Conditions: 150 mM KOAc, 10 mM MgCl2 and 150 mM bicine (pH 8.5), 24 C. Chemical mapping of a 177-nucleotide RNA with DMS. It was measured as part of the RMDB library M2PK90. For DMS, 881 sequencing reads were counted.
[RMDB]
RNA sequence: GGGAACGACUCGAGUAGAGUCGAAAAGUAGUGCUCGAGAGGGAGGCUGUCUCGCAGAGCUUUUAGAUCUUCUGAUCUUUCCCUCCUCCAUAUCGCUUAUGCGUGAAGCGAUAGACGCAUAAUUAAAGAAUCUCUAAGGGUUCGCCCUUAGAGAUUCAAAAGAAACAACAACAACAAC
Reactivity to DMS in 0.01 (KOAc 150mM, MgCl2 10mM, bicine 150mM(pH8.5), 24C), signal-to-noise 1, nucleotides 027 to 126: g010u000a080g020u000g020c060u000c060g020a070g000a210g030g010g010a050g020g020c090u000g040u000c020u000c040g000c150a080g020a270g000c000u000u000u000u000a020g000a010u000c010u000u000c270u000g000a000u000c000u000u000u000c000c000c000u000c010c000u000c010c010a090u000a110u000c020g060c150u000u000a040u000g020c070g000u000g000a060a050g000c050g010a050u000a040g000a030c050g000c040a020u000a030a050u020u000a060a070a080